[RMDB]
The record gives the reactivity of an RNA of 177 nucleotides to 2A3 and DMS. For 2A3, 2,193 sequencing reads were counted. Reactivities are given for positions 27 through 126. The data come from the RNA Mapping Database (RMDB), library OK2TRN.
RNA sequence: GGGAACGACUCGAGUAGAGUCGAAAAUUGCCAAUUGGAUCGCUGCCACCAAAUAGGUCGCAAAACGUUCGGGCUGAUUGUCACUUUCAUCGAGAGAAUACCACCCGAGAUCGGACUGAUCGGCUGCUACUUGAGUUGUGUUCGCACAACUCAAGUAAAAAGAAACAACAACAACAAC
Reactivity to 2A3 in 0.01 (KOAc 150mM, MgCl2 10mM, bicine 150mM(pH8.5), 24C), signal-to-noise 2, nucleotides 027 to 126: u080u020g050c020c000a000a050u070u090g060g020a050u040c060g010c060u030g030c010c010a030c000c000a020a160a230u180a160g010g000u020c020g040c050a060a040a050a030c060g030u040u030c010g080g000g010c060u020g010a070u050u060g070u030c040a030c190u040u100u030c100a270u080c120g030a020g000a010g040a280a090u100a160c030c030a000c000c000c000g000a010g000a050u130c020g010g020a010c020u070g010a050u030c000g040g020c020u060g030c020
Reactivity to DMS in 0.01 (KOAc 150mM, MgCl2 10mM, bicine 150mM(pH8.5), 24C), signal-to-noise 3, nucleotides 027 to 126: u020u010g000c010c010a130a110u000u000g010g000a050u010c050g020c150u000g000c020c040a100c020c040a060a090a120u000a130g020g010u000c230g000c070a030a050a050a160c130g000u000u020c000g000g010g000c170u010g010a030u000u000g020u000c100a090c030u000u010u000c070a120u010c150g000a050g030a100g000a130a070u010a100c130c080a080c010c010c000g000a050g010a030u010c040g000g000a060c080u010g000a120u000c040g000g000c000u010g010c090